This 207-nucleotide RNA was probed chemically with DMS and 2A3. The 2A3 profile rests on 4,260 reads. For DMS the reverse transcriptase was MarathonRT.
RNA sequence: GGGAACGACUCGAGUAGAGUCGAAAACUGGAAGGUACGAUCUAUGAUCCUUGGAAUGCGGUAAGGGAGAAGACAGAGCGAGGCGCACACGCAUACACACACACACACAUAUUCACAUGCAUGCACAUGUACACACACACCUGUGCACACAUGUACAUCACCAGCUAUAGUUCGCUAUAGCUGGUGAAAAAGAAACAACAACAACAAC
Reactivity to DMS in 0.01 (KOAc 150mM, MgCl2 10mM, bicine 150mM(pH8.5), 24C), signal-to-noise 1, nucleotides 027 to 156: c000u000g000g000a100a060g000g040u010a100c040g000a130u020c070u010a060u000g020a040u000c000c050u000u000g080g000a000a180u000g000c030g030g040u010a120a110g000g000g020a080g030a070a090g030a100c050a070g000a100g010c030g000a060g010g000c050g020c050a040c040a060c080g040c030a100u000a060c030a060c040a000c030a060c030a030c030a080c000a050c030a070u000a090u010u010c060a020c030a010u000g020c010a060u000g000c010a070c020a040u000g020u000a120c100a060c080a090c060a030c100a050c050c020u000g000u000g030c020a040c020a040c000a020u000g010u000a040c060a100
Reactivity to 2A3 in 0.01 (KOAc 150mM, MgCl2 10mM, bicine 150mM(pH8.5), 24C), signal-to-noise 5, nucleotides 027 to 156: c050u040g040g040a040a010g060g010u060a010c040g050a090u000c000u040a050u270g050a060u030c020c040u060u050g030g050a070a030u130g040c030g030g040u060a040a060g010g020g010a020g010a060a000g030a040c030a010g030a010g060c070g020a010g030g000c010g020c010a010c000a010c020g050c020a020u060a070c020a020c000a010c000a000c000a000c010a000c020a010c030a020u080a130u140u110c040a060c000a030u040g040c010a010u030g010c020a010c000a010u020g030u110a050c140a010c010a010c000a000c000a000c180c010u020g010u030g000c010a010c000a000c000a030u040g030u110a040c020a090